[RMDB]
RNA sequence: GGGAACGACUCGAGUAGAGUCGAAAAGCUCUGCCAGACAGAUCGAACAACAAAGAGAGAUCGAAAAUCUUAGAGGAGAGAACGAAUCUGUCGACUUCACUAGGACAUUGUCGAUCAGAGGUCCAAAGACCAAUCAUGGCUUCGGCUAUGGUUGGUCAAAAGAAACAACAACAACAAC
Reactivity to 2A3 in 0.01 (KOAc 150mM, MgCl2 10mM, bicine 150mM(pH8.5), 24C), signal-to-noise 9, nucleotides 027 to 126: g010c000u000c000u010g030c020c000a020g000a020c010a010g010a020u020c020g040a060a060c030a060a030c030a020a300a010g100a020g010a000g000a020u020c020g040a050a030a020a050u000c010u010u020a020g000a030g040g000a010g010a010g030a060a030c010g030a060a140u140c110u150g090u040c030g080a160c000u020u010c010a010c050u020a010g000g020a010c030a130u080u130g040u020c000g000a020u060c010a000g020a020g040g040u010c010c000a040a050a020
Reactivity to DMS in 0.01 (KOAc 150mM, MgCl2 10mM, bicine 150mM(pH8.5), 24C), signal-to-noise 9, nucleotides 027 to 126: g020c010u000c010u000g010c090c030a230g000a050c040a050g010a020u010c020g010a300a200c050a080a100c230a070a130a110g000a070g010a270g000a020u000c010g000a070a060a130a190u000c000u000u000a010g010a080g000g000a020g010a110g010a120a030c020g010a100a110u040c110u030g010u000c000g000a280c010u000u000c010a100c020u010a010g000g000a010c130a080u020u010g010u010c000g000a130u010c010a020g010a040g000g000u010c020c020a040a060a100
Source: RMDB library OK1LIB, as collected in RNAgym. Chemical mapping of a 177-nucleotide RNA with 2A3 and DMS. 2A3 adducts were read by reverse transcription with SuperScript II with manganese. High 2A3 reactivity points to a flexible backbone, as in loops and unpaired stretches. For 2A3, 65,668 sequencing reads were counted. The RNA was probed in 150 mM KOAc, 10 mM MgCl2 and 150 mM bicine (pH 8.5) at 24 C.